[RMDB]
RNA sequence: GGGAACGACUCGAGUAGAGUCGAAAAGCGAAAAUCGGACGGUGGCUGCAAGUCGCAUCGCAAAACCGCGGCAAGUGGAGUUAGCGAGAGGAGGGUGGGUUUUGGCUUCCUUAAGCAAUCGGUCACCAUAAGAGGAUUCGCUUCGGCGAAUCCUCAAGAUCACCAUGAAGUUCGCUUCAUGGUGAUCAAAAGAAACAACAACAACAAC
Reactivity to 2A3 in 0.01 (KOAc 150mM, MgCl2 10mM, bicine 150mM(pH8.5), 24C), signal-to-noise 1, nucleotides 027 to 156: g070c000g050a080a030a000a010u150c020g140g110a030c060g000g050u000g000g010c000u020g030c020a000a050g020u040c010g000c000a060u010c030g030c050a000a060a040a040c030c030g080c010g120g120c270a190a070g000u000g040g050a070g120u110u050a000g070c070g020a000g000a010g010g030a060g000g020g070u180g080g000g030u060u060u050u080g070g000c010u050u000c010c020u070u070a050a000g040c030a010a010u080c010g000g000u000c010a000c030c000a010u030a050a070g000a000g000g000a010u000u000c000g000c020u000u000c100g010g000c030g000a000a000u030c000c000u000c000a000a020